Record summary:
Structure probing data (DMS and 2A3) for a 177-nucleotide construct. Reactivities are given for positions 27 through 126. For 2A3, 880 sequencing reads were counted. Source: RMDB library OK2TRN, as collected in RNAgym.
[RMDB]
RNA sequence: GGGAACGACUCGAGUAGAGUCGAAAAGGUAGCAGAGAAGAGACUAGGCUUCAGACUAGAUAGUAUCACACUACCGGUACAUAGUAGAGACAUACAUAGAUGCGUAUGACACAUCAGAGCUGCCAUGACCCUGAGCAGCAUUCGUGCUGCUCAGGGUAAAAGAAACAACAACAACAAC
Reactivity to DMS in 0.01 (KOAc 150mM, MgCl2 10mM, bicine 150mM(pH8.5), 24C), signal-to-noise 1, nucleotides 027 to 126: g110g000u000a050g010c040a110g010a100g010a120a040g020a140g100a140c030u060a050g000g000c140u020u000c130a090g010a130c100u000a020g010a100u000a080g020u030a080u000c110a010c230a100c030u000a010c010c010g010g060u000a020c100a130u010a070g050u000a080g020a100g010a080c110a040u030a010c100a060u000a080g020a010u000g010c060g020u020a060u010g010a060c020a010c060a030u000c000a040g000a080g010c010u000g010c040c010a060u010g000
Reactivity to 2A3 in 0.01 (KOAc 150mM, MgCl2 10mM, bicine 150mM(pH8.5), 24C), signal-to-noise 1, nucleotides 027 to 126: g120g010u020a070g020c000a010g070a040g010a200a000g060a010g040a040c040u000a020g080g070c020u100u140c060a000g020a110c020u040a000g020a070u110a070g020u030a040u010c040a000c000a000c050u060a010c020c020g030g010u070a030c030a040u080a020g120u070a020g020a060g010a150c010a000u110a030c000a020u090a040g090a070u060g110c070g000u070a020u070g030a040c010a000c010a020u110c020a000g010a030g070c010u020g000c000c000a060u110g000
For DMS the reverse transcriptase was MarathonRT. For DMS, 708 sequencing reads were counted.